Chemical mapping of a 177-nucleotide RNA with DMS and 2A3. It was measured as part of the RMDB library OK2TRN. The reactions ran in a buffer of 150 mM KOAc, 10 mM MgCl2 and 150 mM bicine (pH 8.5), at 24 C. The DMS profile rests on 14,139 reads.

[RMDB]
RNA sequence: GGGAACGACUCGAGUAGAGUCGAAAACAGUUCGAAGGCGGCCUCACCGCGGGCCUCCUGGCCGGUGCCCACCCGCAGCACCGUCAACCCCAACAGCCGGUGCAACAGCCGCGCCUCGGUCUGCACCAACUACACUUAUCUUCGGAUAAGUGUAGUUAAAAGAAACAACAACAACAAC
Reactivity to DMS in 0.01 (KOAc 150mM, MgCl2 10mM, bicine 150mM(pH8.5), 24C), signal-to-noise 9, nucleotides 027 to 126: c100a100g010u010u010c080g010a100a030g010g010c060g010g020c020c030u000c080a100c140c130g020c100g010g000g010c020c010u000c030c030u000g010g010c100c020g000g010u000g010c010c020c050a130c060c030c030g010c140a290g000c010a020c000c010g010u000c050a110a210c040c000c010c020a090a110c130a090g020c110c040g010g010u000g000c040a050a060c130a170g000c020c010g010c210g000c070c040u010c020g010g000u000c040u000g000c070a100c030c040
Reactivity to 2A3 in 0.01 (KOAc 150mM, MgCl2 10mM, bicine 150mM(pH8.5), 24C), signal-to-noise 4, nucleotides 027 to 126: c030a030g090u170u140c050g100a080a010g030g010c000g010g010c010c010u030c030a160c040c080g030c060g010g020g000c000c000u030c010c000u020g030g000c020c030g020g000u020g010c000c010c040a120c010c040c020g040c060a010g030c000a000c000c020g010u030c010a080a130c010c000c000c000a010a050c020a090g100c060c030g000g010u020g010c010a070a060c020a070g030c000c010g050c030g100c050c020u040c010g010g030u000c030u000g000c010a010c020c010